[RMDB]
RNA sequence: GGGAACGACUCGAGUAGAGUCGAAAAGAUAUGGAUCGUAUUAGCUGCUAAAGCCCAUUCGGAAACGAAUGAGGCUGAUGUAUAGCUACUACGAUCCUAAGUCAAAAGCUGUCCUUCGGGACAGCAAGUUACAACUAAGCUUCGGCUUAGUUGUAACAAAAGAAACAACAACAACAAC
Reactivity to DMS in 0.01 (KOAc 150mM, MgCl2 10mM, bicine 150mM(pH8.5), 24C), signal-to-noise 3, nucleotides 027 to 126: g010a020u000a000u020g000g000a000u000c000g000u000a000u000u000a010g010c000u020g040c130u020a010a040a020g010c010c010c000a020u000u000c000g020g010a010a000a020c000g000a010a010u000g000a090g040g020c010u000g020a130u020g040u000a090u000a000g030c000u000a010c060u000a000c000g000a010u000c000c000u000a000a040g010u000c010a120a090a100a180g000c000u000g010u000c000c000u010u000c230g010g010g010a010c000a010g000c020a010a010
Reactivity to 2A3 in 0.01 (KOAc 150mM, MgCl2 10mM, bicine 150mM(pH8.5), 24C), signal-to-noise 4, nucleotides 027 to 126: g000a000u010a010u050g010g000a000u000c000g010u010a000u010u010a030g010c010u300g110c300u300a000a000a010g000c000c000c000a000u010u000c010g000g000a010a010a010c010g020a010a000u060g050a150g130g030c010u000g000a000u070g060u040a300u300a130g000c000u000a000c000u000a000c000g000a000u000c000c000u000a000a000g010u000c010a020a010a100a130g000c000u000g000u010c020c000u010u040c260g100g000g010a000c010a000g000c000a010a010